RNA sequence: GGGAACGACUCGAGUAGAGUCGAAAAGAUAUGGAAAUUCCGUGUUGUCAGUUGAGCGUAUCGGAAACGAUACGCCAACUUGGAUUUACACGGUUAUUCCUAAGUCAAAGCGAACUUCGGUUCGCAAGAUGGGAGAUAUCUUCGGAUAUCUCCCAUCAAAAGAAACAACAACAACAAC
Reactivity to 2A3 in 0.01 (KOAc 150mM, MgCl2 10mM, bicine 150mM(pH8.5), 24C), signal-to-noise 2, nucleotides 027 to 126: g000a030u070a020u100g000g070a010a010a140u200u050c010c010g000u000g000u000u030g030u030c030a000g000u000u010g060a060g130c010g010u010a000u010c000g040g000a070a030a030c020g000a000u010a000c000g030c000c000a000a000c000u010u100g090g000a010u200u250u250a000c010a010c000g000g000u030u000a040u010u000c010c000u020a130a040g060u020c070a150a060a020g010c010g010a000a000c000u050u060c300g120g000u000u000c000g000c010a000a010
Reactivity to DMS in 0.01 (KOAc 150mM, MgCl2 10mM, bicine 150mM(pH8.5), 24C), signal-to-noise 4, nucleotides 027 to 126: g000a030u000a300u000g000g000a000a030a300u010u010c010c000g030u000g000u000u000g000u000c000a010g010u000u000g000a120g000c010g030u000a000u000c010g020g010a070a040a180c020g010a010u000a000c000g020c000c000a000a010c010u000u000g020g010a020u010u010u010a000c000a000c000g000g020u010u010a070u000u000c000c000u020a040a120g000u010c040a080a110a140g000c000g000a010a010c000u000u010c240g020g000u010u000c000g060c000a010a030
Background
This 177-nucleotide RNA was probed chemically with 2A3 and DMS. For DMS, 3,053 sequencing reads were counted.